[RMDB]
RNA sequence: GGGAACGACUCGAGUAGAGUCGAAAAAAAAAGAUAUGGAGAUCCUCCCCACCGACUCGAAUCGUUGAAAUCUCAUCGGAAACGAUGAGAUGGAGAUUUCGAGUCGAGGGAUCUCCUAAGUCAAAAACAUACAUAAACAGUUCGCUGUUUAUGUAUGAAAAGAAACAACAACAACAAC
Reactivity to DMS in 0.01 (KOAc 150mM, MgCl2 10mM, bicine 150mM(pH8.5), 24C), signal-to-noise 4, nucleotides 027 to 126: a050a050a070a150a100g000a020u000a060u010g000g010a030g000a020u000c000c000u000c150c030c000c020a300c070c010g000a010c010u000c000g000a030a030u000c040g010u000u020g000a130a070a020u000c000u010c000a000u000c000g000g000a030a020a040c000g010a010u000g000a000g010a000u000g000g000a050g000a030u000u010u000c000g010a030g000u000c010g010a040g020g000g000a010u000c000u000c000c000u000a000a040g000u010c020a090a120a080a090a180
Reactivity to 2A3 in 0.01 (KOAc 150mM, MgCl2 10mM, bicine 150mM(pH8.5), 24C), signal-to-noise 1, nucleotides 027 to 126: a010a010a000a120a110g020a030u080a060u110g000g020a010g010a000u000c000c000u020c000c040c010c010a020c000c010g000a000c000u000c020g000a010a010u020c030g120u230u030g020a000a000a000u000c000u000c010a010u000c000g010g000a020a020a010c000g000a000u010g010a000g000a000u000g000g000a000g010a000u160u230u130c020g000a000g000u000c000g000a000g000g010g000a000u000c000u000c000c000u000a010a010g030u010c030a040a000a000a180a160